[RMDB]
RNA sequence: GGGAACGACUCGAGUAGAGUCGAAAAAUGAGGGCUGAAGAAAGAUGGCAACAACGUCUUGCCUCCAUGGGAUUUUCGUUUGACAAAAUCAAUCAAAAGAUGAGGCGAACGGGAGACACACGGCGUAAUACUACUGGCCGUUCGCGGCCAGUAGUAUAAAAGAAACAACAACAACAAC
Reactivity to DMS in 0.01 (KOAc 150mM, MgCl2 10mM, bicine 150mM(pH8.5), 24C), signal-to-noise 1, nucleotides 027 to 126: a090u040g000a080g000g010g050c030u000g010a080a040g020a110a080a100g030a020u000g010g040c120a010a060c170a100a080c170g030u000c020u020u010g000c000c010u020c030c040a140u050g000g010g020a100u000u000u010u000c030g000u000u010u010g000a070c010a010a070a070a220u000c010a010a080u030c140a040a010a110a050g000a080u000g010a240g010g000c010g010a050a050c040g000g000g010a010g000a040c050a080c140a060c070g000g010c050g010u000a020
Structure probing data (DMS) for a 177-nucleotide construct. For DMS, 649 sequencing reads were counted. Values cover nucleotides 27 to 126. The reactions ran in a buffer of 150 mM KOAc, 10 mM MgCl2 and 150 mM bicine (pH 8.5), at 24 C.